Overview: The record gives the reactivity of an RNA of 177 nucleotides to DMS. The DMS profile rests on 616 reads.
RNA sequence: GGGAACGACUCGAGUAGAGUCGAAAAUGGAAGUUACAUUGGAGAAUCCAUUCUCAGCAAAGCAGACCAGGAGACUUCUAACUGGGGGAUGUUCAGAAAAUGUCAGGGUAGCUGUGUGGCAGAACUCUGUACUUGAGGACUUCGGUCCUCAAGUACAAAAAGAAACAACAACAACAAC
Reactivity to DMS in 0.01 (KOAc 150mM, MgCl2 10mM, bicine 150mM(pH8.5), 24C), signal-to-noise 1, nucleotides 027 to 126: u010g010g000a080a080g020u010u010a110c080a120u000u040g050g000a120g000a100a180u010c050c020a030u000u000c040u000c030a120g030c120a030a050a080g010c130a060g010a080c100c040a070g000g000a150g010a100c060u000u000c020u030a000a080c080u000g030g000g000g040g010a070u030g000u000u000c030a040g010a030a080a100a070u010g000u000c000a040g000g000g000u000a090g030c050u000g020u000g020u010g000g000c050a080g000a030a020c110u000c030